An RNA of 207 nucleotides, treated with 2A3 and DMS and read out base by base. In probing experiments dimethyl sulfate is read out at A N1 and C N3, which are open when not base-paired. For 2A3 the reverse transcriptase was SuperScript II with manganese.
RNA sequence: GGGAACGACUCGAGUAGAGUCGAAAAGGCCCCCUGACUUCCUACAGUUGCUGUGAGGCUGCCGGGCAGGGAGAUGGCGUCAUGCCUCGUGGCACACUGUGUCUGUGUAGACAGCAGUCAUUUCCCAGGGUGGGAGGAGAAAGCCUGACCCCAGCCACUCGUGAAAAUUAUUCGUAAUUUUCACGAGAAAAGAAACAACAACAACAAC
Reactivity to 2A3 in 0.01 (KOAc 150mM, MgCl2 10mM, bicine 150mM(pH8.5), 24C), signal-to-noise 4, nucleotides 027 to 156: g070g010c010c010c000c020c020u030g030a040c010u090u070c040c040u030a040c020a020g010u000u000g020c000u010g000u020g020a020g010g000c010u040g020c030c020g060g050g070c050a080g070g030g030a080g030a070u050g020g000c030g020u100c100a080u230g010c000c000u010c010g010u030g010g000c000a010c000a000c030u060g010u010g030u060c030u030g120u010g070u060a040g040a130c010a020g010c000a010g000u030c020a060u030u030u040c020c040c000a010g010g000g010u090g010g030g010a100g040g020a090g110a040a090a020g020c010c010u040g060a130c010c010c010c000a020g040c010c020a030
Reactivity to DMS in 0.01 (KOAc 150mM, MgCl2 10mM, bicine 150mM(pH8.5), 24C), signal-to-noise 1, nucleotides 027 to 156: g010g010c000c000c020c020c020u000g000a110c020u010u000c020c030u010a090c050a060g020u000u000g030c000u000g030u010g020a050g030g010c020u000g050c010c070g010g020g050c050a130g010g000g000a100g000a100u000g010g020c030g000u000c060a100u000g000c030c000u000c070g040u000g010g040c000a070c080a100c050u000g010u000g030u000c010u010g020u000g000u020a100g030a030c010a120g000c090a100g030u000c000a090u000u000u000c010c000c030a210g040g000g040u000g000g030g000a110g000g000a090g010a090a080a120g000c060c010u010g000a210c000c020c020c010a100g020c040c020a240